Conditions: 150 mM KOAc, 10 mM MgCl2 and 150 mM bicine (pH 8.5), 24 C. An RNA of 177 nucleotides, treated with DMS and read out base by base. In probing experiments dimethyl sulfate is read out at A N1 and C N3, which are open when not base-paired. Source: RMDB library OK2TST, as collected in RNAgym. Reactivities are given for positions 27 through 126.
RNA sequence: GGGAACGACUCGAGUAGAGUCGAAAAGAAAUGAAAGACGGGAAGAUGGACCUACAGCUUUUUGGUCUGGGUAUCUGGGGGCCGCACGGCGCGAUGCCGUUGCAAAUGACUGAACUGGCCUACACCCCGAGGGUCUAAGUUUCGACUUAGACCCUCGAAAAGAAACAACAACAACAAC
Reactivity to DMS in 0.01 (KOAc 150mM, MgCl2 10mM, bicine 150mM(pH8.5), 24C), signal-to-noise 1, nucleotides 027 to 126: g000a110a110a050u020g000a150a160a030g010a040c130g000g000g010a030a050g030a110u000g010g040a110c200c210u010a070c070a020g010c050u000u000u000u010u010g010g010u020c030u000g010g030g010u000a070u040c050u000g010g010g000g000g020c130c080g010c000a010c000g010g000c010g030c230g010a100u010g050c000c040g010u000u020g050c010a080a100a030u020g010a100c150u020g020a040a170c090u010g000g040c060c010u000a100c100a100c050c010c010